RNA sequence: GGGAACGACUCGAGUAGAGUCGAAAAUGGUGGAGAUAACUGCAGUUUUGCCAUCGGCUGAGAACUUUUUAAUAUUACUCACGAUCGUUUGGUAAUCGCUAUAGCCGAACGGGGUAUAAACCUCCUCUGUCAAAUCAGUAUUCGUACUGAUUUGACAAAAAGAAACAACAACAACAAC
Reactivity to 2A3 in 0.01 (KOAc 150mM, MgCl2 10mM, bicine 150mM(pH8.5), 24C), signal-to-noise 2, nucleotides 027 to 126: u060g010g040u030g000g050a070g000a140u080a110a160c060u070g000c030a080g000u000u020u120u060g050c000c000a000u030c000g000g010c030u030g000a020g010a090a120c000u140u110u080u130u130a250a140u200a090u180u140a090c020u030c010a020c070g060a240u050c030g080u000u010u050g000g020u000a020a030u040c010g000c110u110a050u100a210g020c000c020g000a020a010c040g040g000g000g000u060a040u130a220a050a060c020c020u000c000c000u050c040
Reactivity to DMS in 0.01 (KOAc 150mM, MgCl2 10mM, bicine 150mM(pH8.5), 24C), signal-to-noise 3, nucleotides 027 to 126: u000g010g000u000g020g020a070g010a100u010a090a110c130u000g010c060a100g000u000u000u000u000g010c020c030a040u010c020g000g010c030u000g010a030g020a070a130c150u010u010u000u010u030a060a130u010a060u000u000a100c000u000c040a050c190g010a120u000c020g000u000u010u000g010g010u000a030a080u010c240g040c060u010a090u010a250g000c050c010g000a030a050c100g000g010g000g020u010a080u000a050a050a060c070c040u000c020c050u000c130

This 177-nucleotide RNA was probed chemically with 2A3 and DMS.
The DMS profile rests on 2,427 reads.
For 2A3, 1,645 sequencing reads were counted.
The reactions ran in a buffer of 150 mM KOAc, 10 mM MgCl2 and 150 mM bicine (pH 8.5), at 24 C.
Source: RMDB library OK2TRN, as collected in RNAgym.